Record summary:
The data come from the RNA Mapping Database (RMDB), library ARCHII. The record gives the reactivity of an RNA of 207 nucleotides to 2A3. Values cover nucleotides 27 to 156. For 2A3 the reverse transcriptase was SuperScript II with manganese.
[RMDB]
RNA sequence: GGGAACGACUCGAGUAGAGUCGAAAAGCUCAGAGCCCUCUCGCCCUAGCUUCCGCUUGUAAGACGGGGAAUCACGAGGGGUCAAACCAAAUCAAGCUGGCGUGGAUUCCCCCACCUGAGGGAUGAAGCGUAAGAUAUAAUUCAGGUUAGCUAUUCACGUUAACUACAGGUUCGCCUGUAGUUAACGAAAAGAAACAACAACAACAAC
Reactivity to 2A3 in 0.01 (KOAc 150mM, MgCl2 10mM, bicine 150mM(pH8.5), 24C), signal-to-noise 1, nucleotides 027 to 156: g060c020u020c050a070g030a100g170c010c020c010u070c000u010c020g090c000c000c010u000a050g040c010u020u000c010c000g000c060u010u020g010u050a050a040g020a160c070g000g000g010g070a010a040u220c070a030c040g000a000g020g000g000g040u000c000a020a010a040c080c060a020a000a120u060c000a010a000g000c000u050g000g020c000g000u010g020g000a000u000u010c000c000c000c000c000a000c000c010u000g000a010g000g000g000a000u010g000a030a010g010c010g010u010a000a000g040a010u110a050u080a280a050u160u010c000a000g000g000u070u090a050g040c080u180a070u100u080c060a020